Structure probing data (2A3) for a 177-nucleotide construct. Source: RMDB library OK1LIB, as collected in RNAgym. 2A3 adducts were read by reverse transcription with SuperScript II with manganese. The 2A3 profile rests on 501 reads. As a SHAPE reagent, 2A3 marks flexible, mostly unpaired nucleotides at the ribose 2'-OH. The reactions ran in a buffer of 150 mM KOAc, 10 mM MgCl2 and 150 mM bicine (pH 8.5), at 24 C.
[RMDB]
RNA sequence: GGGAACGACUCGAGUAGAGUCGAAAAUUUGUGAUAGUCGGUAAGAUACAUGACAGCUGCACAGCAUCACUUCACGCGCUGUCAUCGGAUGUCUAGAACAUUCCUUCUAAGAAUAGCCACUGAAGAGCCACCGAUUUGGGUUCGCCCAAAUCGGUGGAAAAGAAACAACAACAACAAC
Reactivity to 2A3 in 0.01 (KOAc 150mM, MgCl2 10mM, bicine 150mM(pH8.5), 24C), signal-to-noise 1, nucleotides 027 to 126: u070u000u180g010u040g000a030u130a050g070u040c000g000g070u000a090a090g050a120u080a160c040a050u010g000a050c000a000g010c030u100g020c130a060c000a220g050c070a000u010c010a010c120u300u080c100a020c080g000c000g000c000u040g000u000c000a000u070c000g000g000a050u010g000u000c000u020a020g050a000a000c000a000u000u110c010c000u000u120c000u010a000a000g040a000a240u000a050g080c150c010a160c060u070g060a000a010g060a030g120